[RMDB]
RNA sequence: GGGAACGACUCGAGUAGAGUCGAAAAACUGACGGUACGCCGUCAGAACGGUAGAAAAGAUGGUUUGAAAACCACGCCUUCUACCAAUAUAGUAAAGAAAUAGGCGGAGCGGUCAUACGUGACCGCAAAAACAUCCUUGGCUUCGGCCAAGGAUGAACGCUUCUAUUGACUUCGGUCAAUAGAAGCGAAAAGAAACAACAACAACAAC
Reactivity to 2A3 in 0.01 (KOAc 150mM, MgCl2 10mM, bicine 150mM(pH8.5), 24C), signal-to-noise 2, nucleotides 027 to 156: a020c010u000g000a000c010g000g000u040a000c140g000c030c000g000u000c000a020g000a000a030c020g000g000u000a010g000a000a010a000a000g070a280u010g000g120u030u120u180g160a180a120a010a000c000c000a000c000g010c000c000u000u010c000u000a000c000c000a000a000u150a000u040a000g150u140a000a110a010g010a030a150a050u070a020g000g000c000g010g000a000g020c000g000g000u000c010a010u030a140c160g070u050g000a000c000c000g000c000a000a000a000a000a000c000a000u000c000c020u000u000g000g000c000u030u040c290g070g010c000c000a000a000g000g000a000u000g000a000a000

Conditions: 150 mM KOAc, 10 mM MgCl2 and 150 mM bicine (pH 8.5), 24 C.
An RNA of 207 nucleotides, treated with 2A3 and read out base by base.